[RMDB]
Background:
Structure probing data (DMS and 2A3) for a 177-nucleotide construct. Source: RMDB library OK2TST, as collected in RNAgym. Conditions: 150 mM KOAc, 10 mM MgCl2 and 150 mM bicine (pH 8.5), 24 C. 2A3 adducts were read by reverse transcription with SuperScript II with manganese. Reactivities are given for positions 27 through 126.

RNA sequence: GGGAACGACUCGAGUAGAGUCGAAAACAUGUACCUGGAUGGUAAGCCGACCGCUCUUCAGUGUGACUUGUGGUCGACUGGUAGAAUUGAGAGCAAUGACAGGAGUUACCUCGAUGAGGAGGAGCGAAUGAUCGAGUGCUUUCGAGCACUCGAUCAUAAAAGAAACAACAACAACAAC
Reactivity to DMS in 0.01 (KOAc 150mM, MgCl2 10mM, bicine 150mM(pH8.5), 24C), signal-to-noise 1, nucleotides 027 to 126: c100a110u010g020u000a080c020c000u000g000g000a070u000g020g000u000a060a120g000c020c000g050a070c050c050g010c010u000c020u000u030c020a150g020u030g010u010g010a010c050u000u000g000u000g000g010u000c020g000a020c010u010g000g010u000a030g010a050a080u000u010g000a070g010a110g030c030a090a030u000g010a100c090a060g000g010a230g000u000u010a120c020c030u010c030g010a090u020g000a090g000g010a070g000g010a060g030c060g000a080
Reactivity to 2A3 in 0.01 (KOAc 150mM, MgCl2 10mM, bicine 150mM(pH8.5), 24C), signal-to-noise 1, nucleotides 027 to 126: c030a030u170g020u120a030c000c010u070g070g020a020u090g020g080u090a080a070g000c020c000g060a040c000c010g000c020u000c020u090u080c010a030g020u010g050u100g300a030c010u070u220g000u070g090g030u020c020g030a010c010u070g000g060u090a090g030a080a060u030u080g050a080g010a000g080c070a050a080u070g030a050c010a020g040g050a030g010u010u070a140c020c000u000c000g070a120u210g120a030g090g000a020g020g000a010g000c040g100a030